[RMDB]
RNA sequence: GGGAACGACUCGAGUAGAGUCGAAAAGCUUAAUAACCUGCGCUGAGCCCUUCUCCCCCAGCUUGCCUGUGUCCUAGGGAAUUGGAACGUCAUCCUUCACAGGAUCGUGUGGAAGUCCUGCUCGGGGUCCAAACAUGGUAAUUCGUUACCAUGUUAACAGUGUUGUUAAAUUCGUUUAACAACACUGAAAAGAAACAACAACAACAAC
Reactivity to 2A3 in 0.01 (KOAc 150mM, MgCl2 10mM, bicine 150mM(pH8.5), 24C), signal-to-noise 5, nucleotides 027 to 156: g010c020u100u100a070a020u090a180a190c020c040u080g040c050g010c070u070g050a050g030c010c020c000u070u090c090u060c010c010c000c010c020a000g010c020u020u080g020c010c010u060g010u020g010u050c020c030u020a040g000g020g070a050a060u100u090g050g020a090a010c010g040u040c050a030u030c010c000u060u060c050a040c000a050g010g020a030u050c030g010u060g010u010g070g030a060a040g020u030c000c020u010g000c000u010c020g000g010g010g010u010c020c010a030a020a000c000a000u000g000g000u010a020a020u040u030c050g000u000u010a000c010c000a000u000g010u000u010a030a000
Reactivity to DMS in 0.01 (KOAc 150mM, MgCl2 10mM, bicine 150mM(pH8.5), 24C), signal-to-noise 4, nucleotides 027 to 156: g020c040u010u000a070a120u000a070a090c030c030u010g010c060g030c030u000g000a100g010c020c020c040u000u000c030u000c010c010c000c020c030a100g020c040u000u000g010c030c010u000g020u000g010u000c020c020u000a110g020g040g010a090a110u000u010g010g010a090a090c070g010u000c060a110u000c020c020u000u020c080a080c080a060g010g010a020u000c040g010u010g040u000g000g010a120a080g000u000c000c020u000g000c020u000c030g010g020g020g000u000c030c030a100a020a020c000a010u010g010g020u000a010a080u000u010c290g010u000u000a010c000c000a000u000g000u000u000a040a180